Source: RMDB library OK3TST, as collected in RNAgym. Chemical mapping of a 207-nucleotide RNA with 2A3 and DMS. For 2A3 the reverse transcriptase was SuperScript II with manganese. Conditions: 150 mM KOAc, 10 mM MgCl2 and 150 mM bicine (pH 8.5), 24 C.
RNA sequence: GGGAACGACUCGAGUAGAGUCGAAAACAUCUGGUUCCUGGGGAGGAGUCAUGACACUAUCAAUGCCUCUGGGUGGUGAAGGCAUUGAUUGUCCUGACCCCACAGUUUCUGUCCCAUGACAAGGACCAGCUGACUAAGGAGCUGCAGCAGCAUGUAAGAGGUCAAAAUGAUUCGUCAUUUUGACCUCAAAAGAAACAACAACAACAAC
Reactivity to 2A3 in 0.01 (KOAc 150mM, MgCl2 10mM, bicine 150mM(pH8.5), 24C), signal-to-noise 3, nucleotides 027 to 156: c030a040u040c050u050g010g000u080u100c020c010u020g000g000g030g010a150g010g010a030g010u020c010a020u020g010a010c010a010c090u190a030u030c000a000a010u000g000c000c000u000c050u080g110g000g020u060g000g030u040g050a070a000g000g000c000a000u000u010g010a010u000u010g010u000c000c010u000g000a010c000c000c000c000a070c020a010g040u040u080u030c040u090g060u030c030c000c010a060u080g050a050c080a080a050g000g000a000c010c000a000g000c030u030g040a070c030u050a030a080g040g010a030g020c030u020g020c030a020g020c000a000g010c010a020u040g050u060a140a100
Reactivity to DMS in 0.01 (KOAc 150mM, MgCl2 10mM, bicine 150mM(pH8.5), 24C), signal-to-noise 1, nucleotides 027 to 156: c030a070u000c040u000g020g020u000u000c030c030u040g000g010g020g050a150g010g000a040g010u000c020a020u000g000a070c030a080c190u000a110u010c010a010a030u000g010c070c010u020c040u000g000g000g060u000g030g040u000g020a170a020g010g000c000a040u020u000g020a030u000u020g020u020c000c060u000g040a200c000c010c010c010a210c060a130g040u010u020u010c030u010g010u000c000c010c000a220u010g070a190c110a170a070g000g010a040c020c020a070g010c080u000g020a100c030u030a060a100g000g020a130g080c050u000g020c030a090g000c020a040g010c050a140u010g010u010a090a240